[RMDB]
RNA sequence: GGGAACGACUCGAGUAGAGUCGAAAAGAUAUGGAGGUGUCACAAUCAGCGAUGAAAGCUUUCGGAAACGAAAGCUGGAGCUGAUUGUGAGCACCUCCUAAGUCAAAGUCCGAGUUCGCUCGGACAACGAGCCUAUAUUGUUCGCAAUAUAGGCUCGAAAAGAAACAACAACAACAAC
Reactivity to 2A3 in 0.01 (KOAc 150mM, MgCl2 10mM, bicine 150mM(pH8.5), 24C), signal-to-noise 2, nucleotides 027 to 126: g010a020u060a070u230g010g000a030g000g020u040g050u060c000a000c000a000a010u000c010a000g000c010g280a300u040g050a050a020a000g000c000u000u020u020c000g040g060a110a090a120c020g000a010a010a010g000c000u000g000g000a000g000c000u010g010a000u000u010g000u000g000a000g000c000a010c000c000u010c000c000u000a010a010g000u010c070a040a100a010g000u000c000c000g000a000g010u040u120c300g010c180u010c020g000g010a000c000a000a010
Reactivity to DMS in 0.01 (KOAc 150mM, MgCl2 10mM, bicine 150mM(pH8.5), 24C), signal-to-noise 3, nucleotides 027 to 126: g020a030u010a300u010g000g010a020g010g030u000g010u000c000a020c000a000a000u000c000a000g010c010g020a140u020g000a170a160a050g000c000u000u000u000c010g030g000a130a150a160c020g010a010a000a010g010c010u000g000g000a040g010c010u000g000a000u000u000g000u000g000a050g020c000a010c000c000u000c000c010u020a010a050g000u000c050a130a140a150g010u000c010c010g010a020g000u000u000c250g010c010u000c020g010g000a000c010a020a080